[RMDB]
RNA sequence: GGGAACGACUCGAGUAGAGUCGAAAAACGAUCACAGAUGCAGUGCAUAUAUUAAGAUUUGAUGUGGUCUUUUUAGCAGGGGUUUCAUGUUGAGUUAUCCUUCCUAAGUUAAAUUAAUGCACAUGUCCUACCUCACAUGGUUCGCCAUGUGAGGUAGAAAAGAAACAACAACAACAAC
Reactivity to DMS in 0.01 (KOAc 150mM, MgCl2 10mM, bicine 150mM(pH8.5), 24C), signal-to-noise 1, nucleotides 027 to 126: a050c120g030a040u000c010a040c060a070g030a100u030g000c150a110g040u010g010c030a010u010a070u010a160u000u010a070a070g000a090u000u000u000g000a130u010g010u000g000g000u010c000u000u000u020u000u000a030g000c210a100g000g010g000g010u010u030u010c000a070u000g000u000u000g010a130g000u010u000a020u000c040c060u000u000c150c010u000a070a070g020u000u000a040a080a050u010u000a110a050u000g000c040a000c020a080u000g000u000c080
Reactivity to 2A3 in 0.01 (KOAc 150mM, MgCl2 10mM, bicine 150mM(pH8.5), 24C), signal-to-noise 1, nucleotides 027 to 126: a010c000g000a030u030c010a000c000a030g090a030u170g040c010a010g040u000g080c070a010u120a000u050a000u120u230a180a040g050a110u090u100u230g070a080u080g100u020g200g000u060c000u050u040u000u000u040a000g000c000a000g140g020g000g040u060u180u040c030a020u180g080u220u130g100a060g090u060u110a010u070c000c000u030u090c010c010u050a070a060g000u060u090a060a250a080u060u150a060a000u060g000c020a020c010a030u070g030u010c030